[RMDB]
RNA sequence: GGGAACGACUCGAGUAGAGUCGAAAAUCGCCCACCAGCCAGGGCAGGGGACCGGGCAUGUAGCCGAUCUCCAGGUUGGCGCCGGUGUCCAGGGCGUCGGGGAACACGCAGAUCUCGUAGCCCUUGACUAAUGCUCAUCCUUCGGGAUGAGCAUUAGAAAAGAAACAACAACAACAAC
Reactivity to DMS in 0.01 (KOAc 150mM, MgCl2 10mM, bicine 150mM(pH8.5), 24C), signal-to-noise 3, nucleotides 027 to 126: u000c140g030c020c010c020a200c070c030a140g000c070c040a100g000g010g000c050a120g010g000g010g000a020c020c010g040g030g000c090a080u010g030u030a150g040c010c000g010a030u000c000u000c090c080a070g020g020u000u000g010g020c090g000c100c060g000g000u000g010u000c040c080a060g020g020g020c020g020u000c030g020g000g000g000a100a080c110a120c150g000c150a090g000a120u000c020u000c030g000u000a290g010c000c040c030u000u000g000a220
Reactivity to 2A3 in 0.01 (KOAc 150mM, MgCl2 10mM, bicine 150mM(pH8.5), 24C), signal-to-noise 2, nucleotides 027 to 126: u030c010g090c020c000c030a030c010c070a000g070c010c020a070g060g000g090c020a040g040g000g020g000a020c040c060g010g000g100c100a060u290g140u150a010g040c010c000g000a000u010c070u020c050c000a020g040g050u030u040g010g000c000g000c010c040g060g020u050g070u010c020c020a000g000g010g000c020g040u000c000g030g000g020g030a050a070c090a030c150g150c120a100g030a220u080c000u030c050g030u000a000g010c000c000c000u000u060g010a030